This 177-nucleotide RNA was probed chemically with DMS and 2A3. For DMS the reverse transcriptase was MarathonRT.
RNA sequence: GGGAACGACUCGAGUAGAGUCGAAAAACACAUGUUCUCAUCUUCCAGGAUGCAGCAGACUGAAGAAAUUCAGACAUCCCGCAACCUGCGAUUAUCGCAAGGUCAAGGCAAAGUCCGGUAAUGGCGUAGCUAACAAUUUUUUCGAAAAUUGUUAGCUAAAAGAAACAACAACAACAAC
Reactivity to DMS in 0.01 (KOAc 150mM, MgCl2 10mM, bicine 150mM(pH8.5), 24C), signal-to-noise 9, nucleotides 027 to 126: a070c140a100c150a070u020g000u010u000c030u000c010a080u010c050u000u010c070c080a100g010g000a050u010g010c170a070g010c070a060g010a150c010u000g010a020a020g000a080a090a140u000u010c020a020g000a190c090a090u010c020c020c000g020c090a070a020c010c010u000g000c010g000a230u030u010a100u010c020g000c000a030a050g000g010u000c040a100a080g010g020c060a080a070a120g010u010c000c000g000g000u010a020a030u000g000g010c030g010u000
Reactivity to 2A3 in 0.01 (KOAc 150mM, MgCl2 10mM, bicine 150mM(pH8.5), 24C), signal-to-noise 9, nucleotides 027 to 126: a000c110a010c020a090u120g030u090u030c030u010c030a050u020c020u140u050c030c030a040g050g020a030u040g020c040a040g020c020a030g060a100c010u010g000a010a010g020a030a080a030u040u010c010a000g060a090c020a060u030c010c010c000g000c020a020a010c000c010u010g000c010g040a060u110u180a160u300c010g000c050a100a100g020g000u030c040a090a070g030g000c040a170a110a020g030u040c010c010g010g020u060a050a040u070g060g000c030g020u020